An RNA of 177 nucleotides, treated with 2A3 and DMS and read out base by base.

RNA sequence: GGGAACGACUCGAGUAGAGUCGAAAAGAUAUGGAUUUCGAGAACAACAACAGCAUACUGGCUCGGAAACGAGCUUAUGACAUGUUGACGAAAUCCUAAGUCAAACUCUCGAAGUUCGCUUCGAGAGCAAUAGUAAGUUGUUCGCAACUUACUAUUGAAAAGAAACAACAACAACAAC
Reactivity to 2A3 in 0.01 (KOAc 150mM, MgCl2 10mM, bicine 150mM(pH8.5), 24C), signal-to-noise 9, nucleotides 027 to 126: g020a010u050a030u100g000g000a010u010u010u010c120g050a170g300a300a100c060a030a010c020a020a030c030a100g030c000a010u050a080c130u230g090g000c000u000c000g000g000a020a030a020c000g000a000g000c000u030u000a010u000g100a040c100a210u300g000u000u020g050a060c000g000a000a000a000u000c000c000u010a050a000g010u010c030a080a040a220c010u000c000u000c000g000a010a000g010u070u240c260g100c200u010u010c010g000a000g000a000g000
Reactivity to DMS in 0.01 (KOAc 150mM, MgCl2 10mM, bicine 150mM(pH8.5), 24C), signal-to-noise 9, nucleotides 027 to 126: g010a030u000a270u000g000g000a010u000u000u000c000g010a190g020a160a190c180a090a090c040a060a080c160a120g000c010a010u000a010c300u010g030g010c000u000c000g010g000a050a040a100c000g010a010g010c000u000u000a000u000g010a080c070a170u010g010u000u000g010a220c010g000a010a010a010u000c000c000u000a020a100g000u000c010a130a100a300c010u000c000u000c000g000a010a010g020u000u010c300g020c010u000u000c000g010a010g000a010g010
For 2A3 the reverse transcriptase was SuperScript II with manganese. DMS (dimethyl sulfate) methylates the pairing face of unpaired adenines and cytosines. The 2A3 profile rests on 96,575 reads. Reactivities are given for positions 27 through 126. Conditions: 150 mM KOAc, 10 mM MgCl2 and 150 mM bicine (pH 8.5), 24 C.